[RMDB]
RNA sequence: GGGAACGACUCGAGUAGAGUCGAAAAUAGUAUAAAUGGUAAUGAGUUUUGUGCUUAUAGUGAAUCGGAUCUGUAAGUUGACCACAGUUCAGUUUACUGGUUUAUACUGUUACCAUUUUGUAAUUUUACCGUUGGUGAAAGAUUCUACCACAGAGAGAUUUGGUAAACUGUUCGCAGUUUACCAAAUAAAAGAAACAACAACAACAAC
Reactivity to 2A3 in 0.01 (KOAc 150mM, MgCl2 10mM, bicine 150mM(pH8.5), 24C), signal-to-noise 1, nucleotides 027 to 156: u040a000g060u060a020u020a150a020a010u020g040g000u030a030a030u070g040a060g060u100u050u140u200g010u050g010c000u050u020a020u020a060g000u020g120a240a160u240c150g070g020a000u050c020u000g000u010a010a040g000u040u130g130a010c030c020a010c060a030g000u010u040c000a000g010u040u040u070a010c020u030g090g000u070u030u030a090u030a000c000u000g050u020u010a020c000c000a000u000u100u080u120g010u020a080a130u040u120u080u090a080c000c050g060u060u070g000g000u040g040a080a060a060g100a060u120u000c010u100a020c000c080a060c140a070g210a050g020a030g020
Reactivity to DMS in 0.01 (KOAc 150mM, MgCl2 10mM, bicine 150mM(pH8.5), 24C), signal-to-noise 2, nucleotides 027 to 156: u000a070g020u000a060u010a010a010a010u000g080g020u000a040a070u010g010a080g010u000u000u010u020g010u000g010c000u000u000a090u000a020g000u000g000a140a110u010c090g050g000a100u020c040u020g010u000a020a060g040u020u000g020a130c090c080a030c010a050g010u000u000c020a090g020u000u000u000a030c010u000g030g010u000u000u000a030u000a060c000u010g010u010u000a060c000c010a070u020u000u000u000g000u010a070a120u000u000u010u000a130c020c030g000u000u000g010g050u000g010a070a110a160g000a110u010u000c060u000a100c040c050a120c060a110g000a140g010a190g000
Annotation
Structure probing data (2A3 and DMS) for a 207-nucleotide construct. Conditions: 150 mM KOAc, 10 mM MgCl2 and 150 mM bicine (pH 8.5), 24 C. For DMS the reverse transcriptase was MarathonRT. It was measured as part of the RMDB library OK3TST. 2A3 adducts were read by reverse transcription with SuperScript II with manganese.